Chemical mapping of a 177-nucleotide RNA with 2A3. Source: RMDB library RFM100, as collected in RNAgym. High 2A3 reactivity points to a flexible backbone, as in loops and unpaired stretches. The 2A3 profile rests on 627 reads. The reactions ran in a buffer of 150 mM KOAc, 10 mM MgCl2 and 150 mM bicine (pH 8.5), at 24 C. 2A3 adducts were read by reverse transcription with SuperScript II with manganese.
RNA sequence: GGGAACGACUCGAGUAGAGUCGAAAAAGCUGGGGGAAGACGGUCUACUCAUCUGCUCUCUCCUUUCAGCCAGCGGGCUGUCUUCCCAGGUGUAGAUCACCUAUUCUAACUUCACCUGUUUUGAUACAGGUUACGCACUGUUCGCAGUGCGUAACCUAAAAGAAACAACAACAACAAC
Reactivity to 2A3 in 0.01 (KOAc 150mM, MgCl2 10mM, bicine 150mM(pH8.5), 24C), signal-to-noise 1, nucleotides 027 to 126: a000g110c120u070g000g080g000g000g000a020a000g000a000c020g000g000u050c000u050a040c030u030c040a110u060c050u040g000c000u000c000u000c020u010c040c010u050u230u100c060a100g030c010c000a000g010c000g000g000g000c000u000g000u000c000u000u000c000c030c030a010g000g000u050g000u050a090g000a130u300c000a000c000c010u020a090u070u090c060u090a100a150c030u090u050c020a100c080c000u000g120u040u050u090u060g070a060u040a060c070